This 177-nucleotide RNA was probed chemically with 2A3 and DMS.
[RMDB]
RNA sequence: GGGAACGACUCGAGUAGAGUCGAAAAGAUAUGGACGUAUGGCGUCGAUAAGCAUGCAUCGGAAACGAUGCCAUGCUUUUGACGACGAGUACGUCCUAAGUCAAAGCGUCAAUCUUCGGAUUGACGCCCAAUAUCCGUGGUUCGCCACGGAUAUUGGAAAAGAAACAACAACAACAAC
Reactivity to 2A3 in 0.01 (KOAc 150mM, MgCl2 10mM, bicine 150mM(pH8.5), 24C), signal-to-noise 9, nucleotides 027 to 126: g010a010u050a020u100g010g000a000c010g010u010a010u110g300g300c030g000u010c080g030a170u130a300a010g000c010a000u010g000c000a000u010c010g010g010a030a030a020c010g000a000u000g000c040c000a000u000g000c000u030u000u030u080g220a120c050g000a000c010g010a010g000u000a000c000g000u000c000c000u000a050a000g020u010c050a220a070a070g010c010g000u010c010a000a010u000c010u060u200c300g090g000a000u000u000g000a000c000g000c000
Reactivity to DMS in 0.01 (KOAc 150mM, MgCl2 10mM, bicine 150mM(pH8.5), 24C), signal-to-noise 9, nucleotides 027 to 126: g000a030u000a260u000g000g000a020c000g030u000a000u000g020g020c000g020u000c000g010a100u020a020a010g010c000a000u000g000c000a000u000c000g010g000a070a050a090c000g010a010u000g000c210c120a000u000g010c000u000u000u000u000g020a170c100g010a020c010g010a300g000u000a000c000g010u000c000c000u000a000a060g000u000c020a120a110a190g010c000g010u000c000a010a000u000c000u000u020c280g020g000a010u000u000g000a010c000g010c000
The 2A3 profile rests on 52,529 reads. 2A3 adducts were read by reverse transcription with SuperScript II with manganese. It was measured as part of the RMDB library TTRDES.